[RMDB]
RNA sequence: GGGAACGACUCGAGUAGAGUCGAAAAUUGCAGUUGAUUGAAACUAAAUCAUGUGCGCUAAGUUGUCCCGAAAGUAUCUUUGGAUUUCUACAAAACAGUGUUCCUUCUUUAGGAUGCUGAUCCGUAGCUUAGCCUUGUUCUUCGGAACAAGGCUAAGAAAAGAAACAACAACAACAAC
Reactivity to DMS in 0.01 (KOAc 150mM, MgCl2 10mM, bicine 150mM(pH8.5), 24C), signal-to-noise 2, nucleotides 027 to 126: u000u020g020c020a070g000u000u010g000a020u000u000g000a090a100a200c220u010a090a070a020u000c000a030u000g000u010g010c060g020c230u000a060a060g010u000u000g000u000c000c020c000g010a020a120a090g010u020a050u000c080u000u000u000g010g000a030u000u000u010c020u010a070c010a080a180a050a200c030a000g000u000g020u000u000c020c000u000u000c300u000u010u010a000g010g000a040u000g010c040u010g000a080u000c080c120g000u000a020g010
This 177-nucleotide RNA was probed chemically with DMS.
Values cover nucleotides 27 to 126.
The data come from the RNA Mapping Database (RMDB), library RFMREP.